[RMDB]
RNA sequence: GGGAACGACUCGAGUAGAGUCGAAAAGCUCUGUAAUGUGAUGGGAUCCGAAGCCCCAUUGAGGGAUAAUACAGGCUCUCCCAUCCAACUCCUAUUCCAACACGUCCUCGUCGUACAGAGUGGUAACUAAGGUAUAGCUCCUUCGGGAGCUAUACAAGGACUACAAAAUGUUCGCAUUUUGUAGUCCAAAAGAAACAACAACAACAAC
Reactivity to 2A3 in 0.01 (KOAc 150mM, MgCl2 10mM, bicine 150mM(pH8.5), 24C), signal-to-noise 3, nucleotides 027 to 156: g000c000u020c030u040g080u090a100a250u080g050u070g010a000u000g000g000g000a020u180c010c030g030a100a010g010c000c010c020c040a090u090u220g050a300g010g000g000a030u080a180a060u150a230c110a040g010g000c010u000c010u000c020c000c000a000u040c000c000a010a040c020u040c000c010u050a090u100u030c020c010a050a000c010a030c060g070u070c020c050u090c020g110u030c010g010u030a010c030a000g000a030g010u060g010g040u090a100a030c070u040a160a030g140g000u000a000u000a000g000c010u000c000c000u020u050c130g030g010g000a000g080c000u000a000u000a000c000a000a010
Reactivity to DMS in 0.01 (KOAc 150mM, MgCl2 10mM, bicine 150mM(pH8.5), 24C), signal-to-noise 2, nucleotides 027 to 156: g000c030u010c020u010g010u010a020a100u030g000u000g010a070u010g000g030g020a080u010c020c000g010a230a270g010c010c020c010c040a300u000u010g010a150g010g020g040a110u000a080a150u000a070c120a200g000g010c070u000c060u000c000c000c030a050u000c020c030a100a030c050u000c020c010u000a100u000u010c030c040a080a070c100a060c070g000u000c010c020u000c040g000u000c050g000u010a050c020a000g010a050g040u020g000g030u010a040a100c070u010a080a140g000g020u000a000u000a000g010c000u000c000c000u000u000c300g040g020g040a000g020c000u000a010u010a000c010a060a090

Source information:
The record gives the reactivity of an RNA of 207 nucleotides to 2A3 and DMS. For 2A3, 1,831 sequencing reads were counted. It was measured as part of the RMDB library M2RFPK. High DMS reactivity at an A or C suggests that its Watson-Crick edge is free. The DMS profile rests on 3,269 reads.